Source information: Chemical mapping of a 207-nucleotide RNA with 2A3. The RNA was probed in 150 mM KOAc, 10 mM MgCl2 and 150 mM bicine (pH 8.5) at 24 C.

[RMDB]
RNA sequence: GGGAACGACUCGAGUAGAGUCGAAAACCAACGACAGCAAUUACGCCCUCGCUGCUUAAGCAGUGAGCCCUCUGCCCGGAUUUGUCUGUGGAUCCGGAGCCGAAAGGCGCGCGGAGGGUCAUGAAACACGGAAUCGUGCGCAUUCUAGUCUGUGGGACUCAACCCGAUAGUUCGCUAUCGGGUUGAGAAAAGAAACAACAACAACAAC
Reactivity to 2A3 in 0.01 (KOAc 150mM, MgCl2 10mM, bicine 150mM(pH8.5), 24C), signal-to-noise 1, nucleotides 027 to 156: c030c000a020a010c060g130a010c010a000g070c000a050a280u060u160a140c040g030c070c010c000u040c030g000c030u050g010c020u250u250a230a030g000c000a000g010u000g000a010g040c000c000c000u010c020u000g020c000c000c010g000g000a000u070u020u020g190u080c210u080g140u140g050g000a000u000c000c000g000g020a000g020c000c000g100a080a050a070g020g010c010g010c000g000c000g000g000a000g000g030g000u000c000a010u170g010a000a090a000c000a020c000g060g080a100a120u140c030g090u090g070c060g000c060a070u050u030c060u080a030g020u020c040u030g010u050g000g020g040a040